[RMDB]
RNA sequence: GGGAACGACUCGAGUAGAGUCGAAAAGCUAUUUACACUAAGCAUAAUGGAAAUGUAAGUAAGUUCACAACUGCUGAAAAAACCAUAGUUGAAUCAAACAUGAAACAAAUGGUUGAGGCUCGCGUAGGAAUGCUUGGUCUUAGUAAAGAAAAAGAAACAUACAAGUUGAUUUCGAUCAACUUGUAUGAAAAGAAACAACAACAACAAC
Reactivity to 2A3 in 0.01 (KOAc 150mM, MgCl2 10mM, bicine 150mM(pH8.5), 24C), signal-to-noise 5, nucleotides 027 to 156: g020c020u050a080u060u100u080a040c030a020c030u050a020a010g000c000a020u080a110a090u190g070g030a110a100a050u170g010u050a010a030g010u020a130a040g010u100u100c110a070c030a190a060c040u020g000c010u010g080a050a030a020a030a050a030c020c000a020u030a040g040u020u120g050a040a010u030c030a020a060a100c050a080u090g080a090a040a060c060a030a160a060u020g000g000u000u020g020a040g050g000c010u030c060g030c040g050u060a040g000g110a110a010u010g000c000u000u020g030g000u020c030u060u100a040g010u050a020a060a090g070a050a110a020a010a000g070a030a070a010
Reactivity to DMS in 0.01 (KOAc 150mM, MgCl2 10mM, bicine 150mM(pH8.5), 24C), signal-to-noise 3, nucleotides 027 to 156: g020c040u000a060u000u000u000a050c050a070c040u000a090a080g030c030a120u000a110a100u000g040g010a100a070a070u000g000u000a080a080g000u000a050a080g020u000u000c140a040c070a090a160c060u000g000c030u040g010a000a060a110a090a040a060c020c000a040u000a130g030u000u000g000a140a120u000c020a090a090a080c090a060u010g000a250a080a150c080a080a090a090u000g000g030u000u000g000a120g030g000c050u000c090g000c180g030u000a080g020g000a090a010u000g010c020u020u010g020g000u000c060u010u000a030g040u000a050a050a140g010a060a070a050a070a090g000a090a090a130